[RMDB]
RNA sequence: GGGAACGACUCGAGUAGAGUCGAAAAUUCAGUAUUCCAUGCUCUAUUAGGUCAUUUAGAAUUCUUCUCUUUAGGUUCUUAGAGGCCAUUUUUGAGUGAUAUAUUGUAGCGAGGCUGAGGAGUAUCACAGAAGGCUAAGAUUCGUCUUAGCCUUCUGAAAAGAAACAACAACAACAAC
Reactivity to DMS in 0.01 (KOAc 150mM, MgCl2 10mM, bicine 150mM(pH8.5), 24C), signal-to-noise 5, nucleotides 027 to 126: u010u010c050a090g000u000a080u010u000c030c090a150u000g000c000u000c020u010a060u000u000a080g030g020u010c020a050u010u000u000a030g010a030a030u000u000c040u000u000c250u000c130u000u000u000a050g030g010u010u000c040u010u000a060g020a050g020g010c070c050a120u010u010u000u010u000g000a030g010u000g000a050u000a040u000a060u000u000g020u000a050g010c090g000a070g010g010c040u000g000a050g010g000a100g000u000a060u000c120a180
Reactivity to 2A3 in 0.01 (KOAc 150mM, MgCl2 10mM, bicine 150mM(pH8.5), 24C), signal-to-noise 1, nucleotides 027 to 126: u030u030c020a000g050u040a120u120u020c020c030a050u060g030c020u000c000u050a080u090u060a080g000g040u000c050a060u050u050u020a020g020a010a010u190u110c020u070u000c070u030c000u100u050u080a010g000g030u060u040c030u020u020a020g030a090g030g000c000c020a110u090u070u000u040u060g020a010g020u030g060a010u030a020u000a020u150u150g060u100a020g080c030g050a050g020g000c020u010g010a020g030g010a070g040u070a040u130c020a000